Overview
An RNA of 207 nucleotides, treated with 2A3 and read out base by base. Source: RMDB library VIROID, as collected in RNAgym. The reactions ran in a buffer of 150 mM KOAc, 10 mM MgCl2 and 150 mM bicine (pH 8.5), at 24 C.
[RMDB]
RNA sequence: GGGAACGACUCGAGUAGAGUCGAAAACUUCGACUCGGACCGGCUCAUCUCGACGAGAGGCGGCAGUCCUCAGUACUCUUACUCUUUGUUUGUAAAGAGGAGACUGCUGGACUCGCCGCCCAAGUUCGAGCUUGGGCCACAGUUCCGAGCGAAGAGACCAAAUUACGUUGUUCGCAACGUAAUUUGGAAAAGAAACAACAACAACAAC
Reactivity to 2A3 in 0.01 (KOAc 150mM, MgCl2 10mM, bicine 150mM(pH8.5), 24C), signal-to-noise 3, nucleotides 027 to 156: c010u000u000c010g140a120c000u000c000g020g010a040c050c110g000g010c010u000c010a010u010c000u030c010g010a010c030g020a020g000a130g170g000c000g010g000c000a000g000u000c010c000u010c010a070g000u150a300c020u010c020u100u150a260c010u020c020u020u070u110g230u270u260u290g290u300a020a020a000g010a000g000g000a000g000a000c000u010g060c050u020g010g000a000c010u070c140g000c000c000g000c000c000c000a000a000g010u060u030c010g000a000g020c020u020u000g000g020g000c000c000a010c000a010g020u080u000c020c000g000a010g000c000g000a010a000g010a000g010a000